Structure probing data (2A3) for a 207-nucleotide construct. The 2A3 profile rests on 990 reads.

RNA sequence: GGGAACGACUCGAGUAGAGUCGAAAACCAAGAGCUUCGGCUCUUGGAAAGGGGUCACAAGUGGGACAUGCUCAGUUACUGAAGCCUCCACGGUAACGAGCAACAGCCGUAACAUCUUGUGACGGAGGCACCCAAAAUUGGGCCGUUCGCGGCCCAAGACAAUCCUUGCUUUCGAGCAAGGAUUGUCAAAAGAAACAACAACAACAAC
Reactivity to 2A3 in 0.01 (KOAc 150mM, MgCl2 10mM, bicine 150mM(pH8.5), 24C), signal-to-noise 1, nucleotides 027 to 156: c000c000a000a000g000a010g000c070u130u180c300g190g000c000u010c000u000u000g000g080a010a030a000g270g020g030g010u030c000a010c000a010a000g000u010g140g140g130a100c110a220u120g020c010u000c050a100g000u000u000a000c000u000g000a070a000g010c010c010u020c010c000a010c000g000g000u000a000a000c000g010a000g000c010a050a130c080a030g200c040c090g110u100a080a010c000a080u110c000u000u000g000u000g000a000c000g000g000a000g030g000c000a010c000c000c000a020a110a030a060u070u020g000g000g000c050c030g010u080u110c280g020c040g080g000c000c000c000a000a000